[RMDB]
RNA sequence: GGGAACGACUCGAGUAGAGUCGAAAAGUGAUGGAAUCAGGGAAGAACAUAUUAUGAAGAUAAUAGAAUCCAAUGUUCAGAUAAGUGCAAAAUUCGUACUGCAGACAAUCCCUAAUAUCAAUGACAAGUGUUCAUAGUUGUUCGCAACUAUGAACACAAAAGAAACAACAACAACAAC
Reactivity to 2A3 in 0.01 (KOAc 150mM, MgCl2 10mM, bicine 150mM(pH8.5), 24C), signal-to-noise 1, nucleotides 027 to 126: g070u010g010a050u050g020g030a060a090u070c040a060g000g000g110a080a020g020a060a020c030a070u080a000u090u120a060u100g040a070a020g020a090u030a140a000u030a150g220a100a030u050c010c000a040a030u030g000u040u020c010a010g030a130u130a210a080g060u010g040c020a030a050a100a230u070u040c070g000u020a030c010u050g050c020a050g040a030c030a030a020u000c030c000c000u040a050a010u060a010u070c060a080a020u060g030a150c040a240a060
Reactivity to DMS in 0.01 (KOAc 150mM, MgCl2 10mM, bicine 150mM(pH8.5), 24C), signal-to-noise 2, nucleotides 027 to 126: g020u010g020a070u020g000g000a090a070u000c120a010g020g000g020a060a100g010a060a030c050a100u000a020u000u000a020u000g000a130a040g000a040u000a020a020u000a070g000a140a120u030c070c120a100a090u000g000u000u020c030a150g000a110u000a010a060g000u020g020c010a020a050a050a100u010u010c170g000u000a070c080u000g020c150a110g010a070c180a040a120u010c010c000c020u000a070a040u000a050u000c060a060a050u010g000a080c210a080a130